[RMDB]
RNA sequence: GGGAACGACUCGAGUAGAGUCGAAAACAAGCUUUCGAGCUUGAUCACUCCUAAGUCACUUUGAGGGAAAUGACAUGAUGAUGUCGGAAACGACAUAACAUCAACAGCAUUUCCUCCCCACCAAAGUGAUAUGGAUCUUACAGGCAUUCGUGCCUAACGUUUCAGAUCUAUUCGUAGAUCUGAAACGAAAAGAAACAACAACAACAAC
Reactivity to DMS in 0.01 (KOAc 150mM, MgCl2 10mM, bicine 150mM(pH8.5), 24C), signal-to-noise 3, nucleotides 027 to 156: c010a040a020g010c000u000u010u000c200g060a050g000c000u000u000g000a090u010c100a080c100u000c000c010u000a110a190g010u000c010a010c020u000u000u000g010a300g000g000g000a030a020a020u000g010a050c110a300u000g010a000u000g030a090u000g000u020c000g000g010a100a100a180c000g020a000c010a030u010a060a130c010a000u000c010a030a100c090a110g000c000a040u000u000u000c010c020u000c180c090c010c050a300c100c010a020a030a020g030u000g000a030u010a200u000g010g000a090u010c030u010u000a140c070a000g010g020c010a110u000u030c220g000u010g020c010c000u020a030a030
Reactivity to 2A3 in 0.01 (KOAc 150mM, MgCl2 10mM, bicine 150mM(pH8.5), 24C), signal-to-noise 6, nucleotides 027 to 156: c000a000a010g010c010u110u160u300c290g130a020g000c000u040u000g030a060u190c080a050c090u020c010c010u050a150a050g010u000c000a000c010u000u000u010g020a050g010g020g000a010a000a010u040g040a080c030a070u030g000a010u000g000a000u000g000u000c000g010g030a100a080a060c010g000a000c000a000u050a090a080c000a000u000c000a010a080c040a110g040c000a000u000u000u000c000c000u040c010c010c010c000a050c020c000a010a000a000g000u010g000a000u010a040u060g030g000a020u030c080u070u240a110c120a070g000g000c010a040u050u090c230g120u100g010c000c000u020a070a040